Structure probing data (DMS and 2A3) for a 177-nucleotide construct. Conditions: 150 mM KOAc, 10 mM MgCl2 and 150 mM bicine (pH 8.5), 24 C. Reactivities are rounded to 0.1 and cut off at 0 and 3. For DMS, 9,299 sequencing reads were counted. Source: RMDB library OK1LIB, as collected in RNAgym. The 2A3 profile rests on 6,977 reads.
RNA sequence: GGGAACGACUCGAGUAGAGUCGAAAAUGUAGGACUCGCCGAAGCCGAUCAAGCCGUGGCGCCCGAUCCGGCGUGCAAGUGCGUCCGGCCGAUGGAUGAACAGGCUGGGUGCGCGCGGAUCGGCGGCACUACACCCACCGUUCGCGGUGGGUGUAGUAAAAGAAACAACAACAACAAC
Reactivity to DMS in 0.01 (KOAc 150mM, MgCl2 10mM, bicine 150mM(pH8.5), 24C), signal-to-noise 4, nucleotides 027 to 126: u020g010u040a100g000g000a110c080u010c010g000c000c000g020a140a160g030c010c020g000a070u000c090a050a100g020c020c010g000u050g010g020c050g010c070c020c000g020a090u010c010c000g000g000c020g010u010g010c080a050a200g000u010g000c040g000u000c000c000g010g010c030c000g000a200u010g020g020a180u030g000a100a120c180a190g000g020c020u000g020g040g000u000g020c010g010c040g010c060g010g000a010u000c000g000g000c020g010g000c050
Reactivity to 2A3 in 0.01 (KOAc 150mM, MgCl2 10mM, bicine 150mM(pH8.5), 24C), signal-to-noise 7, nucleotides 027 to 126: u200g040u060a080g040g090a070c030u040c100g010c020c010g090a130a010g010c020c000g010a040u040c140a160a010g010c030c030g070u190g030g020c050g020c030c010c000g000a000u010c000c000g040g020c010g010u030g030c030a170a090g020u050g090c010g040u040c000c000g010g000c010c000g120a140u170g050g140a170u140g060a190a070c070a090g010g000c000u010g030g000g000u010g000c000g000c010g000c010g020g000a000u000c000g000g000c020g010g000c010